This 177-nucleotide RNA was probed chemically with 2A3 and DMS. Source: RMDB libraries RFM100 and RFMREP, as collected in RNAgym. Conditions: 150 mM KOAc, 10 mM MgCl2 and 150 mM bicine (pH 8.5), 24 C.
RNA sequence: GGGAACGACUCGAGUAGAGUCGAAAAUGUCCCUCCUCUCCUGCUGGCCGGAUGGGACAGGAGGCAUGAAUGAGCCAUCUUUCCAAUGCCUUUCUGUCUUUUCUGGUCCAGGUGUGGCAAAGGGAAGGAGAUAUAGACCUUUCGAGGUCUAUAUCUCAAAAGAAACAACAACAACAAC
Reactivity to 2A3 in 0.01 (KOAc 150mM, MgCl2 10mM, bicine 150mM(pH8.5), 24C), signal-to-noise 9, nucleotides 027 to 126: u150g050u020c000c000c000u010c000c000u010c010u020c000c000u020g070c030u090g010g010c000c000g020g000a010u010g020g010g000a000c000a000g010g000a000g000g000c010a010u160g020a050a020u070g010a040g130c100c050a170u070c050u020u030u000c020c030a060a020u000g010c000c000u040u160u250c000u030g000u000c000u010u010u010u000c010u010g010g010u010c000c000a000g000g000u010g030u030g010g050c140a140a070a060g040g010g020a010a040g170
Reactivity to DMS in 0.01 (KOAc 150mM, MgCl2 10mM, bicine 150mM(pH8.5), 24C), signal-to-noise 6, nucleotides 027 to 126: u020g000u020c000c000c000u000c020c010u000c030u000c010c000u000g010c130u030g010g000c010c020g000g010a010u000g010g010g010a010c000a000g010g000a010g000g010c010a020u000g010a030a050u010g000a080g020c210c290a100u010c020u000u000u010c040c220a160a080u010g000c000c000u000u000u040c010u010g010u010c000u000u000u010u000c000u000g000g020u000c000c000a010g000g010u000g010u010g000g030c300a070a050a050g010g010g000a070a060g000